[RMDB]
RNA sequence: GGGAACGACUCGAGUAGAGUCGAAAAGUCGAUGGGAGUGCCGUUGGUACAGGUGAUUUUGCUACCGUCCGGCAUCGCCACGACCAGACCGAUGACAUCACGAGCACCCGACUUGUCUUUUCCGGUGCAUACUCCCGGUAUUCGUACCGGGAGUAUGAAAAGAAACAACAACAACAAC
Reactivity to DMS in 0.01 (KOAc 150mM, MgCl2 10mM, bicine 150mM(pH8.5), 24C), signal-to-noise 7, nucleotides 027 to 126: g000u010c010g000a120u000g010g000g000a100g020u000g010c000c010g020u010u010g010g020u000a040c030a070g010g000u010g010a160u010u010u010u000g010c200u000a030c020c010g000u000c240c000g020g010c020a020u000c100g000c020c010a030c020g010a040c010c050a090g020a230c070c030g000a070u000g010a160c110a060u000c050a070c070g000a100g000c040a120c010c010c020g010a070c090u010u010g000u010c020u000u000u000u000c010c030g000g000u000g010
Reactivity to 2A3 in 0.01 (KOAc 150mM, MgCl2 10mM, bicine 150mM(pH8.5), 24C), signal-to-noise 5, nucleotides 027 to 126: g010u020c010g060a300u030g020g010g040a110g120u030g010c000c000g010u040u140g010g020u070a030c050a050g030g120u150g200a250u060u160u180u180g040c060u030a000c000c010g080u060c040c010g000g000c000a010u040c020g080c020c010a010c020g010a010c000c010a020g060a030c000c060g030a050u090g040a030c020a080u060c050a040c160g010a010g000c010a030c000c010c010g040a060c060u110u160g060u160c000u070u060u010u020c030c030g060g040u110g050